RNA sequence: GGGAACGACUCGAGUAGAGUCGAAAAGGUCAGCAUCAAGCCGGGCGAUACGCCCGCAGCUGUGGAGGCCAUGACCGGGGGCAAGGUCCUGCUAUGGAACGCCGAGGGCUGCGACGAUCACUGCACCAUUUUCUUCCUAGUUCGCUAGGAAGAAAAUAAAAGAAACAACAACAACAAC
Reactivity to DMS in 0.01 (KOAc 150mM, MgCl2 10mM, bicine 150mM(pH8.5), 24C), signal-to-noise 9, nucleotides 027 to 126: g020g010u000c020a060g010c050a080u000c060a120a060g020c060c020g020g010g020c010g020a170u010a090c110g030c010c000c020g010c090a050g030c020u000g010u010g010g000a100g000g020c030c090a100u010g000a050c040c030g000g010g000g010g020c140a080a060g010g000u000c020c030u000g000c080u010a080u000g010g010a080a080c110g000c040c030g000a120g010g010g010c040u000g010c050g010a070c090g000a070u000c060a070c070u000g000c090a100c110c100